Structure probing data (2A3) for a 207-nucleotide construct.
RNA sequence: GGGAACGACUCGAGUAGAGUCGAAAAUACGAGCAUCCAUUCUUUGUUAAAGCGUCAGUAUCUGCGGGUAAAACAAUCAUAUUCGCUAUGGUGGCAAAGCAGUGUCAAAAAAUGGGCCUGAAAAUGCUUGUGCUUGCCCGACAGGGUGAGAUCGUCGGUAGUUGAAUGUGUUCGCACAUUCAACUACAAAAGAAACAACAACAACAAC
Reactivity to 2A3 in 0.01 (KOAc 150mM, MgCl2 10mM, bicine 150mM(pH8.5), 24C), signal-to-noise 1, nucleotides 027 to 156: u090a000c010g000a030g000c010a010u020c000c000a040u090u060c000u080u140u060g080u080u170a220a110a050g050c010g070u030c040a100g230u090a030u020c050u050g000c000g020g010g010u040a060a090a060a050c090a120a050u080c040a050u020a040u150u040c010g010c090u020a010u060g010g000u020g000g080c030a000a050a080g000c020a050g060u030g030u090c060a000a000a120a000a000a000u060g020g000g020c040c020u040g030a020a070a000a000u110g000c000u000u020g030u000g010c010u030u000g000c000c000c000g030a080c070a090g010g050g010u050g000a020g010a010u100c050g150u030c030g050

For 2A3, 658 sequencing reads were counted. 2A3 adducts were read by reverse transcription with SuperScript II with manganese. Conditions: 150 mM KOAc, 10 mM MgCl2 and 150 mM bicine (pH 8.5), 24 C.